The record gives the reactivity of an RNA of 177 nucleotides to 2A3 and DMS. Reactivities are given for positions 27 through 126.

[RMDB]
RNA sequence: GGGAACGACUCGAGUAGAGUCGAAAAUUGUCACAGUUGAGUCACUGUCUCGUGAUGGGUCAAAUGACAAUGAUGUUUGCCAUGGGAUAAGGUCGGCUGGCUUUUUUGCAGCGUCACUCAAUUUGCGGAAACACUAGAGAUUCGUCUCUAGUGUUUCAAAAGAAACAACAACAACAAC
Reactivity to 2A3 in 0.01 (KOAc 150mM, MgCl2 10mM, bicine 150mM(pH8.5), 24C), signal-to-noise 5, nucleotides 027 to 126: u110u090g140u090c040a020c040a120g030u020u040g030a030g030u030c020a010c080u030g040u030c020u040c070g060u080g060a070u110g020g090g040u080c020a010a050a090u100g040a050c020a040a070u140g080a070u120g040u060u110u140g080c040c020a030u060g030g030g000a040u030a110a090g050g030u060c040g080g010c020u020g020g080c000u100u080u060u020u090u140g030c010a020g010c020g070u030c010a030c020u040c010a040a080u110u080u190g060c080g020
Reactivity to DMS in 0.01 (KOAc 150mM, MgCl2 10mM, bicine 150mM(pH8.5), 24C), signal-to-noise 9, nucleotides 027 to 126: u010u000g010u000c030a090c110a070g000u010u000g000a090g010u010c060a140c040u000g010u000c040u000c070g030u010g000a080u000g010g000g020u000c030a040a060a120u010g010a050c120a070a070u010g000a100u000g010u000u000u000g010c040c020a050u000g000g010g000a050u010a040a060g000g010u000c050g010g010c080u010g010g010c030u000u010u000u000u000u000g010c030a050g010c030g010u000c060a070c040u000c060a040a070u000u000u000g030c140g010
For 2A3, 7,405 sequencing reads were counted. For 2A3 the reverse transcriptase was SuperScript II with manganese. The RNA was probed in 150 mM KOAc, 10 mM MgCl2 and 150 mM bicine (pH 8.5) at 24 C.